[RMDB]
The record gives the reactivity of an RNA of 207 nucleotides to DMS and 2A3. DMS adducts were read by reverse transcription with MarathonRT. It was measured as part of the RMDB library OK3TST. The 2A3 profile rests on 1,481 reads.

RNA sequence: GGGAACGACUCGAGUAGAGUCGAAAAAGUGCGCUAUCACCCUACCAUUGUAACCAGAAGGGCCUAAUUUUAUGUUUUGCUUUGCGCAAGGAUGGCCCGCAAGAAUGUUACCCUACGCCUGAGGCUCCCAGUACGCACCCGUCUUUCUGGCACAGGGUGACACAAUCGAAUUCGUUCGAUUGUGUCAAAAAGAAACAACAACAACAAC
Reactivity to DMS in 0.01 (KOAc 150mM, MgCl2 10mM, bicine 150mM(pH8.5), 24C), signal-to-noise 2, nucleotides 027 to 156: a140g020u000g030c030g020c060u020a150u000c050a060c020c010c020u010a110c100c030a160u000u000g010u010a110a120c040c070a160g000a110a090g000g060g000c020c000u030a020a130u010u000u010u000a130u030g030u000u000u000u000g000c040u000u000u000g030c100g030c030a090a030g000g030a140u000g010g010c000c030c020g000c040a040a120g010a120a060u000g020u000u000a050c010c010c020u000a070c030g020c010c040u000g000a030g040g000c040u000c020c010c030a150g020u010a080c050g000c010a060c040c010c050g000u000c030u010u000u010c060u010g020g000c010a080c040a060g000g020g040
Reactivity to 2A3 in 0.01 (KOAc 150mM, MgCl2 10mM, bicine 150mM(pH8.5), 24C), signal-to-noise 3, nucleotides 027 to 156: a000g050u040g010c010g000c030u090a070u250c060a110c040c010c040u090a040c030c040a130u060u120g080u140a090a100c050c060a060g040a160a120g070g010g000c010c030u140a150a130u070u150u100u100a120u250g090u010u060u050u020g030c020u110u110u300g080c080g000c000a000a000g070g020a040u060g000g000c000c020c000g000c000a010a020g030a070a070u090g010u070u050a050c000c010c000u020a010c080g000c000c000u020g000a020g000g000c010u020c010c020c030a020g070u050a020c040g000c010a010c010c070c010g000u040c000u040u130u040c060u010g000g000c020a020c040a030g000g000g030